[RMDB]
RNA sequence: GGGAACGACUCGAGUAGAGUCGAAAAUUGCUGCGCAGGGCGACAAAGACCCGAUCCCGCAGACCUCUUCCACUGGCUUUGCCAACCUUCGCGACGGCUACACGCCGGACUACGAAAUCAGUCUGGCUAGUGGGAGUAGAUUCGUCUACUCCCACUAAAAAGAAACAACAACAACAAC
Reactivity to DMS in 0.01 (KOAc 150mM, MgCl2 10mM, bicine 150mM(pH8.5), 24C), signal-to-noise 2, nucleotides 027 to 126: u010u010g000c030u010g030c020g010c090a110g020g010g060c060g000a090c110a040a080a090g000a160c050c010c020g010a090u000c050c060c000g010c080a100g020a110c070c020u000c040u000u000c050c030a090c130u010g010g010c040u020u010u040g000c020c010a100a140c060c010u000u000c080g010c100g020a050c040g000g000c020u000a120c210a080c100g010c000c000g000g000a030c010u000a120c140g000a080a100a100u000c170a030g010u000c000u000g020g000c020
Reactivity to 2A3 in 0.01 (KOAc 150mM, MgCl2 10mM, bicine 150mM(pH8.5), 24C), signal-to-noise 1, nucleotides 027 to 126: u070u040g000c020u010g000c000g010c050a090g020g050g000c050g040a080c090a080a170a030g040a080c010c020c010g020a060u010c030c000c000g000c020a050g050a080c000c020u030c010u070u010c000c030a060c080u040g020g010c000u120u060u090g020c030c000a080a060c080c000u020u070c030g020c000g070a100c030g100g000c010u030a020c070a010c140g030c020c010g000g020a020c000u060a070c050g220a060a070a100u080c000a030g020u000c010u000g000g000c000
An RNA of 177 nucleotides, treated with DMS and 2A3 and read out base by base. For 2A3 the reverse transcriptase was SuperScript II with manganese. For DMS the reverse transcriptase was MarathonRT. For DMS, 1,633 sequencing reads were counted. It was measured as part of the RMDB library OK2TST.